Structure probing data (2A3) for a 177-nucleotide construct. Source: RMDB library TTRDES, as collected in RNAgym.
RNA sequence: GGGAACGACUCGAGUAGAGUCGAAAAGAUAUGGAAGUGUGCACGACGAGGAUCGUGUAUCGGAAACGAUACACGGGAGUCGGCACGACUUCCUAAGUCAAAAUCGAUACGGUUCGCCGUAUCGAAAGUCAAUCUACGGCUUCGGCCGUAGAUUGACAAAAGAAACAACAACAACAAC
Reactivity to 2A3 in 0.01 (KOAc 150mM, MgCl2 10mM, bicine 150mM(pH8.5), 24C), signal-to-noise 1, nucleotides 027 to 126: g000a010u010a000u030g030g000a000a000g030u020g010u000g010c140a240c300g020a030c070g070a300g000g000a010u020c000g020u000g000u010a000u000c010g050g000a010a000a000c010g010a000u010a000c000a000c000g000g000g010a010g000u000c000g010g000c010a000c010g040a020c000u000u000c000c000u000a000a000g010u000c050a000a010a000a300u050c020g000a010u000a010c000g000g160u010u120c300g010c130c000g010u020a000u000c000g020a020a000a000